[RMDB]
RNA sequence: GGGAACGACUCGAGUAGAGUCGAAAAAUGGAUAUUGGUACCACUUACUGGUAGAAGAUGGUUGAAGAAAGAGUGAACUUCAUGAGAGGAGAGACAAAGUCAAUAUGUUCAUUAUUAUACCUCCAAUGCCCAACCCAGGACCAUGAUCAGGGUAGGACAUGCUAAUGCGGUUCGCCGCAUUAGCAUGAAAAGAAACAACAACAACAAC
Reactivity to DMS in 0.01 (KOAc 150mM, MgCl2 10mM, bicine 150mM(pH8.5), 24C), signal-to-noise 1, nucleotides 027 to 156: a120u020g000g010a030u020a010u000u020g050g000u000a030c010c050a060c090u000u010a120c060u000g020g040u010a070g020a130a070g030a120u010g030g030u010u020g030a090a080g020a100a040a070g010a160g060u040g020a120a060c030u000u000c080a110u000g060a170g010a160g020g000a150g030a120g050a100c090a050a050a110g000u000c040a050a090u000a060u010g000u020u030c120a040u000u010a080u000u010a050u010a070c040c000u010c020c010a030a060u010g030c020c000c020a140a070c000c020c020a160g000g000a050c040c010a100u010g020a080u000c150a070g010g010g030u000a040g030g010a150
Reactivity to 2A3 in 0.01 (KOAc 150mM, MgCl2 10mM, bicine 150mM(pH8.5), 24C), signal-to-noise 3, nucleotides 027 to 156: a000u040g060g000a040u020a030u120u090g040g020u060a050c010c020a040c050u070u080a050c070u030g050g000u090a060g010a100a020g040a070u080g030g030u040u080g040a070a030g050a040a100a000g060a030g030u050g020a030a010c010u150u110c090a030u090g030a020g010a030g140g020a020g030a050g030a050c050a060a080a020g030u040c010a030a060u060a060u190g020u030u050c020a020u020u170a060u120u080a060u080a070c000c010u070c000c000a010a060u050g000c000c010c010a010a040c030c010c020a010g010g060a030c030c030a050u110g010a030u130c120a070g000g030g020u030a040g020g030a000
Chemical mapping of a 207-nucleotide RNA with DMS and 2A3. Source: RMDB library OK3TST, as collected in RNAgym. The RNA was probed in 150 mM KOAc, 10 mM MgCl2 and 150 mM bicine (pH 8.5) at 24 C. The DMS profile rests on 1,632 reads.